[RMDB]
RNA sequence: GGGAACGACUCGAGUAGAGUCGAAAAUCGGUGAACCCCCUGGCCUUGGGUUUCCUCCCAGGUCCGAAAUCAACCUCCAUGGUUUCCUGCCUGGGCCUCUUCGCCGGGGGCGCUCCGUCUUCGUUCUAGACCACGAGCUUCGGCUCGUGGAAAAGAAACAACAACAACAAC
Reactivity to DMS in 0.01 (KOAc 150mM, MgCl2 10mM, bicine 150mM(pH8.5), 24C), signal-to-noise 4, nucleotides 027 to 129: u070c040g010g060u000g020a110a030c070c000c020c000c020u000g050g020c020c150u030u010g050g010g020u040u050u030c230c070u030c060c010c000a040g060g070u010c250c260g030a040a030a000u000c070a030a270c110c050u060c100c100a220u000g030g020u010u000u010c010c100u030g030c060c010u000g000g000g100c180c000u030c040u030u040c300g000c010c040g050g000g050g030g030c300g000c010u060c000c080g010u070c110u060u030c070g000u050u090c030u020a040g020a300
Reactivity to 2A3 in 0.01 (KOAc 150mM, MgCl2 10mM, bicine 150mM(pH8.5), 24C), signal-to-noise 3, nucleotides 027 to 129: u100c010g040g000u010g080a090a090c000c000c000c000c040u060g000g020c000c010u010u030g010g000g010u120u110u140c050c010u070c000c000c000a000g000g000u000c040c010g010a020a000a000u010c000a000a300c020c020u080c040c050a070u050g010g010u000u020u000c000c040u050g020c000c000u010g000g000g000c000c000u110c010u030u020c010g000c000c000g000g000g000g000g000c000g000c030u000c010c000g020u000c020u090u110c020g110u090u000c010u010a010g020a050
Source: RMDB library 15KLIB, as collected in RNAgym. Chemical mapping of a 170-nucleotide RNA with DMS and 2A3. The 2A3 profile rests on 7,207 reads. For DMS the reverse transcriptase was MarathonRT. The DMS profile rests on 5,610 reads.